An RNA of 177 nucleotides, treated with 2A3 and DMS and read out base by base.
RNA sequence: GGGAACGACUCGAGUAGAGUCGAAAAGACUUUGUUAAGGCCCGAUAUGUAUGACUAUGUCGAAUAUAUACAAAGUAUAUGGAUGGGCCUUAAAUCGACGUCAUAGAUCGAUUAUGUAUCCAUCCAAGAUUGGUGACUAUUUCGAUAGUUAUCAAUCAAAAGAAACAACAACAACAAC
Reactivity to 2A3 in 0.01 (KOAc 150mM, MgCl2 10mM, bicine 150mM(pH8.5), 24C), signal-to-noise 8, nucleotides 027 to 126: g060a010c000u030u010u010g020u050u130a090a070g120g060c000c000c000g000a020u020a010u030g120u020a070u120g050a020c060u030a060u170g030u020c010g030a100a000u070a000u000a000u000a040c010a000a010a010g020u010a040u010a040u030g000g000a010u000g000g000g000c000c000u000u000a000a010a010u010c000g010a000c010g050u130c060a080u070a060g130a200u010c000g000a000u000u010a020u030g000u010a080u000c000c000a000u000c010c000a010a010
Reactivity to DMS in 0.01 (KOAc 150mM, MgCl2 10mM, bicine 150mM(pH8.5), 24C), signal-to-noise 9, nucleotides 027 to 126: g010a040c010u000u000u000g000u010u020a030a090g000g000c060c020c000g020a080u010a020u000g010u020a060u030g010a060c060u030a120u040g000u000c020g010a110a070u010a020u010a050u010a030c010a030a010a040g010u010a060u030a080u000g010g010a020u000g000g000g000c300c030u000u000a010a020a020u000c010g000a010c030g000u010c290a110u060a140g010a120u000c000g000a010u000u000a010u010g000u030a050u000c020c010a010u000c010c010a050a110

Source: RMDB library OK1LIB, as collected in RNAgym.
The DMS profile rests on 33,482 reads.
For 2A3, 31,667 sequencing reads were counted.
Conditions: 150 mM KOAc, 10 mM MgCl2 and 150 mM bicine (pH 8.5), 24 C.
Reactivities are given for positions 27 through 126.